This 177-nucleotide RNA was probed chemically with DMS and 2A3. Values cover nucleotides 27 to 126.
RNA sequence: GGGAACGACUCGAGUAGAGUCGAAAACCUUGCCGCUUAAUUGGCGGCUUGCAUGAACGGAUUAACGACUCCCCCACUGUCCCCGGCCGGAAGCCGGCGAACCCGACAUCCCAGUGAAGAGUCUGGGUCAUUCCAGACGUUUCGACGUCUGGAAUGAAAAAGAAACAACAACAACAAC
Reactivity to DMS in 0.01 (KOAc 150mM, MgCl2 10mM, bicine 150mM(pH8.5), 24C), signal-to-noise 2, nucleotides 027 to 126: c050c010u020u000g000c000c040g000c000u000u020a090a140u060u070g000g000c000g010g020c010u000u000g000c050a110u020g010a090a080c080g010g000a110u000u030a050a100c090g000a060c050u000c000c050c000c000c070a080c070u000g000u010c020c020c020c050g020g020c000c030g000g030a080a170g010c050c010g010g010c080g000a090a100c010c010c010g000a080c050a110u020c010c000c070a030g000u010g000a090a090g010a200g030u010c000u000g010g020g010
Reactivity to 2A3 in 0.01 (KOAc 150mM, MgCl2 10mM, bicine 150mM(pH8.5), 24C), signal-to-noise 4, nucleotides 027 to 126: c000c000u000u120g000c000c010g050c050u130u150a110a060u290u240g010g010c000g000g000c000u000u040g040c030a080u070g090a080a020c080g020g030a090u030u150a180a040c020g070a080c060u040c010c000c000c000c000a040c040u030g050u040c010c000c000c000g010g020c020c020g120g000a090a010g020c000c010g010g010c040g010a010a040c000c010c010g020a010c010a030u040c010c000c000a020g030u040g050a090a110g020a010g120u010c010u010g000g000g000
Background:
It was measured as part of the RMDB library RFM100. For DMS, 3,615 sequencing reads were counted.